Chemical mapping of a 207-nucleotide RNA with 2A3 and DMS.
RNA sequence: GGGAACGACUCGAGUAGAGUCGAAAACUCACUCACUACGGUGAGUGAGAAUCUUAAGGCUCAAUAAAGCUUGCCUUGAGGUCCCUCAAGCAGAUAUAGACUGAAACAUUUAGUAUGAUCAAGCAGGGAGCAACGGCUCGAGUACGCUCGAGCCGAAUAAAAUUUACGCAUUCGUGCGUAAAUUUUAAAAAGAAACAACAACAACAAC
Reactivity to 2A3 in 0.01 (KOAc 150mM, MgCl2 10mM, bicine 150mM(pH8.5), 24C), signal-to-noise 2, nucleotides 027 to 156: c000u020c010a000c000u010c000a010c010u030a050c260g090g030u010g000a000g000u010g000a010g010a000a030u030c000u000u010a010a010g000g000c000u010c150a190a200u170a230a150a060g120c120u130u140g020c010c010u020u030g000a000g020g020u010c010c020c000u080c100a070a000g070c020a010g040a060u120a050u140a140g100a050c050u040g020a010a160a000c000a010u060u130u060a050g040u030a090u230g080a100u170c030a070a030g010c020a030g020g080g010a040g000c010a070a010c020g030g000c000u000c010g000a010g000u030a030c170g020c030u000c000g010a010g000c000c000g000a000a000
Reactivity to DMS in 0.01 (KOAc 150mM, MgCl2 10mM, bicine 150mM(pH8.5), 24C), signal-to-noise 1, nucleotides 027 to 156: c000u000c000a020c040u000c000a000c030u000a040c300g170g030u020g020a020g010u020g010a000g010a040a020u000c010u000u000a020a040g020g000c000u010c040a040a180u010a070a060a160g030c080u000u000g000c020c040u000u000g000a020g030g000u010c040c020c010u000c040a090a110g020c050a150g030a110u000a080u000a070g000a070c000u010g000a100a060a110c040a100u000u000u030a030g000u000a120u010g000a100u030c020a070a090g040c110a120g000g020g020a130g000c040a080a120c010g030g040c000u000c000g000a110g040u000a120c250g030c000u000c020g000a040g050c040c000g040a000a010
Notes: It was measured as part of the RMDB library OK3TST. The RNA was probed in 150 mM KOAc, 10 mM MgCl2 and 150 mM bicine (pH 8.5) at 24 C.